Structure probing data (2A3 and DMS) for a 177-nucleotide construct.
Conditions: 150 mM KOAc, 10 mM MgCl2 and 150 mM bicine (pH 8.5), 24 C.
DMS adducts were read by reverse transcription with MarathonRT.
RNA sequence: GGGAACGACUCGAGUAGAGUCGAAAAGAUAUGGACUUAUCUUACGGGAGCACGGUAUCGGAAACGAUAUGCGUGCGAGGAUCGUAAGAGUAAGUCCUAAGUCAAAACUGAAGGUUCGCCUUCAGAACCACUCAUUUAACUUCGGUUAAAUGAGUGGAAAAGAAACAACAACAACAAC
Reactivity to 2A3 in 0.01 (KOAc 150mM, MgCl2 10mM, bicine 150mM(pH8.5), 24C), signal-to-noise 4, nucleotides 027 to 126: g040a020u050a060u190g010g000a000c010u020u020a020u050c000u010u010a000c010g000g020g010a040g000c010a010c030g020g010u010a010u000c000g000g050a060a060a040c030g010a010u150a010u300g300c010g000u000g000c010g010a020g010g010a020u060c010g000u020a010a000g010a020g060u040a020a020g000u010c000c000u020a040a010g020u000c030a020a020a160a250c010u010g000a000a010g090g030u090u210c300g120c110c000u020u030c010a000g000a040a050
Reactivity to DMS in 0.01 (KOAc 150mM, MgCl2 10mM, bicine 150mM(pH8.5), 24C), signal-to-noise 3, nucleotides 027 to 126: g010a070u020a300u000g000g000a010c000u000u000a040u000c010u000u030a010c000g000g000g010a040g010c000a010c000g010g030u000a010u000c000g020g000a140a100a240c000g010a020u000a000u000g010c010g040u000g030c000g000a040g010g000a070u020c020g000u010a010a000g000a030g000u010a000a000g000u000c000c000u000a020a110g010u020c040a120a110a150a210c000u000g000a010a000g000g020u000u020c300g020c010c000u000u000c000a010g010a110a220